[RMDB]
RNA sequence: GGGAACGACUCGAGUAGAGUCGAAAAAUAAUAGUGCGAAUACUGCGUUUUCUUACAUGGCAUGAGAUGUAAGAAAACUAACAGUUAGAUUUAAACAGAUGGAGAUACACAAAUGUUUGAAUCCCAGGAACAUAACCAUGUUCGCAUGGUUAUGUUCAAAAGAAACAACAACAACAAC
Reactivity to 2A3 in 0.01 (KOAc 150mM, MgCl2 10mM, bicine 150mM(pH8.5), 24C), signal-to-noise 9, nucleotides 027 to 126: a000u200a020a040u080a040g120u040g040c020g030a020a010u030a070c000u000g000c010g010u000u000u000u000c000u000u010a010c000a020u020g180g050c060a080u170g070a090g020a170u000g030u000a000a010g000a000a000a000a000c000u000a040a010c000a000g010u040u050a030g020a020u010u030u050a010a030a000c010a000g020a030u030g080g050a150g050a150u180a090c090a010c000a060a070a030u020g010u000u010u020g030a020a020u020c000c010c000a030g100
Reactivity to DMS in 0.01 (KOAc 150mM, MgCl2 10mM, bicine 150mM(pH8.5), 24C), signal-to-noise 5, nucleotides 027 to 126: a070u020a040a070u000a070g010u010g000c010g000a040a040u010a010c010u010g050c120g000u000u000u000u000c000u000u000a010c010a000u010g030g000c170a160u040g000a100g000a020u000g010u000a000a000g000a010a000a010a020c010u010a090a120c020a000g000u000u010a070g010a080u000u010u000a020a020a010c000a020g000a250u000g000g000a080g010a150u030a080c180a110c020a000a030a180u000g000u000u000u000g010a030a050u000c010c030c030a100g010

Background
Conditions: 150 mM KOAc, 10 mM MgCl2 and 150 mM bicine (pH 8.5), 24 C. An RNA of 177 nucleotides, treated with 2A3 and DMS and read out base by base. For 2A3 the reverse transcriptase was SuperScript II with manganese. Values cover nucleotides 27 to 126.